[RMDB]
Structure probing data (DMS) for a 177-nucleotide construct. It was measured as part of the RMDB library TTRINS. Conditions: 150 mM KOAc, 10 mM MgCl2 and 150 mM bicine (pH 8.5), 24 C.
RNA sequence: GGGAACGACUCGAGUAGAGUCGAAAAGAUAUGGAGUAGAACUACAGUCCUUUGUACCGUUGAAACCUUGGUGCAGUCGGAAACGACUGCACCAAGGUGGAGGUACAUUCGCUGCUACUCCUAAGUCCAUGGCUUAACUGUUCGCAGUUAAGCCAUGAAAAGAAACAACAACAACAAC
Reactivity to DMS in 0.01 (KOAc 150mM, MgCl2 10mM, bicine 150mM(pH8.5), 24C), signal-to-noise 1, nucleotides 027 to 126: g000a090u010a260u000g010g000a020g020u000a000g000a140a030c130u050a300c000a020g000u010c080c150u000u000u000g020u000a020c000c010g000u000u000g000a290a260a030c010c000u000u010g000g030u000g000c000a050g000u000c010g070g000a140a140a240c010g000a030c010u000g010c020a030c000c020a010a010g020g010u010g010g000a010g000g000u000a010c000a010u000u010c200g000c030u000g030c010u020a020c000u000c000c010u010a020a100g000u010c030

DMS adducts were read by reverse transcription with MarathonRT.